[RMDB]
RNA sequence: GGGAACGACUCGAGUAGAGUCGAAAAACUCGCGGAAGUGCAUGGCGGUGAUUCUAUUGAGCCUAUUGGAGUCGCUUCCGGAGCCUGCAAAGCCACGUUCAUAGAGAAUGCUGCCGCACAGCACGGAGUGGCUAAAGAGUUUCGACUCUUUAGCCACAAAAGAAACAACAACAACAAC
Reactivity to DMS in 0.01 (KOAc 150mM, MgCl2 10mM, bicine 150mM(pH8.5), 24C), signal-to-noise 2, nucleotides 027 to 126: a200c030u010c030g020c080g020g010a090a060g010u000g030c070a120u000g010g000c030g020g000u020g000a090u000u010c050u000a110u000u000g020a130g030c030c090u020a120u000u000g010g020a050g000u000c030g020c060u000u010c010c010g020g020a130g030c010c000u000g050c130a070a070a160g020c040c060a070c100g010u000u000c060a090u010a100g000a090g000a050a110u000g010c060u010g000c040c030g000c030a070c070a070g010c070a100c030g010g010a150
Reactivity to 2A3 in 0.01 (KOAc 150mM, MgCl2 10mM, bicine 150mM(pH8.5), 24C), signal-to-noise 2, nucleotides 027 to 126: a020c030u050c050g140c030g060g060a100a070g000u000g020c070a070u130g100g000c010g060g010u100g110a060u050u060c070u120a150u090u130g040a080g040c020c020u080a130u090u150g090g030a060g040u070c030g020c040u010u040c000c040g020g000a040g000c010c040u030g010c030a090a090a060g010c020c020a030c030g000u000u050c020a040u090a060g070a020g030a100a010u040g000c000u030g000c040c000g000c010a050c040a040g010c020a030c010g060g000a070

An RNA of 177 nucleotides, treated with DMS and 2A3 and read out base by base. Values cover nucleotides 27 to 126. Source: RMDB library OK2TST, as collected in RNAgym. The DMS profile rests on 1,451 reads. The RNA was probed in 150 mM KOAc, 10 mM MgCl2 and 150 mM bicine (pH 8.5) at 24 C. DMS adducts were read by reverse transcription with MarathonRT.